[RMDB]
RNA sequence: GGGAACGACUCGAGUAGAGUCGAAAAUCUGGAGGAUACAUUACAGGCAGCAAUUACAUUACACUCCAGGCUGCCACAUUAUCUGGCGAGAGCCAGUAUUACAGAUCGCAUGCGUAGGGAGGGACCAAGCAGGGAGGGAGGAGCAUGCGCUUGGCCAGACGUACCUGAUAUUCGUAUCAGGUACGUCAAAAGAAACAACAACAACAAC
Reactivity to 2A3 in 0.01 (KOAc 150mM, MgCl2 10mM, bicine 150mM(pH8.5), 24C), signal-to-noise 2, nucleotides 027 to 156: u050c030u040g000g000a080g050g010a060u110a300c040a210u230u100a040c040a130g010g050c000a000g010c010a010a080u170u060a150c020a080u050u190a060c050a030c140u010c020c010a000g040g000c000u000g020c010c000a010c000a000u170u150a040u070c000u000g000g000c000g000a030g000a000g060c030c010a000g000u000a000u000u070a020c040a000g170a080u010c000g000c000a030u020g000c020g090u100a120g030g000g100a260g000g000g000a010c030c030a110a020g000c090a080g030g090g080a270g020g030g000a050g030g040a020g020c000a000u000g010c000g000c000u030u010g080g000c020c010a000